[RMDB]
The data come from the RNA Mapping Database (RMDB), library OK3TST.
An RNA of 207 nucleotides, treated with DMS and 2A3 and read out base by base.
The reactions ran in a buffer of 150 mM KOAc, 10 mM MgCl2 and 150 mM bicine (pH 8.5), at 24 C.
For DMS, 1,447 sequencing reads were counted.
The 2A3 profile rests on 2,066 reads.
RNA sequence: GGGAACGACUCGAGUAGAGUCGAAAAUUUGAACCACAACCACUUACACAUAUUUAUCAACUGCGCAGCACCGAAAUUAUUCAUCACUCGAGUUUAUAUAGUAUUUGAUUUGCUGCUAGACUAGAGUGUGUAAAAUACAUCAUUUAUUGGUCAUGGACCAUGACGUAGCAUUCGUGCUACGUCAUGGAAAAGAAACAACAACAACAAC
Reactivity to DMS in 0.01 (KOAc 150mM, MgCl2 10mM, bicine 150mM(pH8.5), 24C), signal-to-noise 1, nucleotides 027 to 156: u030u010u000g000a080a260c040c040a160c010a120a140c000c030a120c060u000u000a030c040a070c030a070u000a110u000u000u000a120u010c070a090a110c080u000g020c060g040c040a030g010c030a240c070c040g000a080a020a150u000u000a090u000u000c020a090u000c060a100c040u000c040g030a120g000u000u000u000a080u000a090u020a050g050u000a090u000u000u000g040a080u000u000u010g050c000u000g010c190u000a090g000a110c140u010a030g000a050g000u000g010u000g030u000a060a050a020a130u000a090c100a100u000c040a080u000u000u000a070u020u010g040g040u000c060a230u010g010g020a300
Reactivity to 2A3 in 0.01 (KOAc 150mM, MgCl2 10mM, bicine 150mM(pH8.5), 24C), signal-to-noise 3, nucleotides 027 to 156: u090u050u090g040a040a010c020c000a010c020a020a080c010c010a040c010u050u040a000c020a000c000a040u020a150u090u050u030a050u050c020a030a060c020u040g000c060g000c050a010g040c000a010c000c020g020a030a010a010u120u060a050u070u060c030a080u040c000a020c030u030c010g020a010g010u020u040u020a080u040a000u000a010g020u020a070u010u010u110g070a050u020u010u130g000c000u000g000c000u020a000g020a020c010u010a010g000a000g010u000g000u000g020u010a000a030a010a020u100a010c020a020u070c000a020u030u030u130a070u060u070g030g000u030c030a060u030g060g010a020